[RMDB]
RNA sequence: GGGAACGACUCGAGUAGAGUCGAAAAAUUGGAAAAGAAAAGGUAGGCCGUUGUUAAUCCUAGCACUUUGGAAGGCUAAGGCAGGUGUAUUGCUUGAGCUCAAGAGUUUGAGACCAGUCUGGGCAACAUGGUGAAACCGCAUCUCUACAAAUAAAAAAUUACUGAUGGUAUUCGUACCAUCAGUAAUAAAAGAAACAACAACAACAAC
Reactivity to DMS in 0.01 (KOAc 150mM, MgCl2 10mM, bicine 150mM(pH8.5), 24C), signal-to-noise 1, nucleotides 027 to 156: a150u010u000g030g010a110a070a060a110g030a110a060a070a120g010g010u000a070g030g030c030c010g020u000u000g010u000u000a080a110u000c030c050u020a030g000c030a060c060u010u000u010g020g040a070a040g020g020c030u010a040a120g010g010c020a020g010g050u000g000u000a060u000u000g040c040u020u010g000a060g000c020u020c080a080a160g010a090g020u000u000u010g010a090g000a060c040c000a010g030u000c040u000g010g000g020c120a050a040c030a050u010g010g050u000g020a070a040a020c020c040g040c050a080u010c020u010c020u000a120c020a030a040a080u020a030a070a030a080a110
Reactivity to 2A3 in 0.01 (KOAc 150mM, MgCl2 10mM, bicine 150mM(pH8.5), 24C), signal-to-noise 2, nucleotides 027 to 156: a010u070u040g010g010a100a000a100a080g040a040a050a040a040g060g010u060a080g030g070c050c070g070u070u060g000u040u070a080a090u040c020c010u010a030g000c030a010c160u090u050u090g040g010a110a010g030g000c020u030a010a020g060g010c090a070g070g000u130g040u090a120u060u080g040c000u050u030g000a010g000c000u010c060a050a010g010a020g170u020u080u150g070a030g000a030c000c000a020g000u000c050u030g000g000g000c000a040a010c020a080u040g050g000u010g020a100a010a010c050c010g000c010a050u000c020u000c010u060a040c050a020a160a020u230a110a100a040a060a020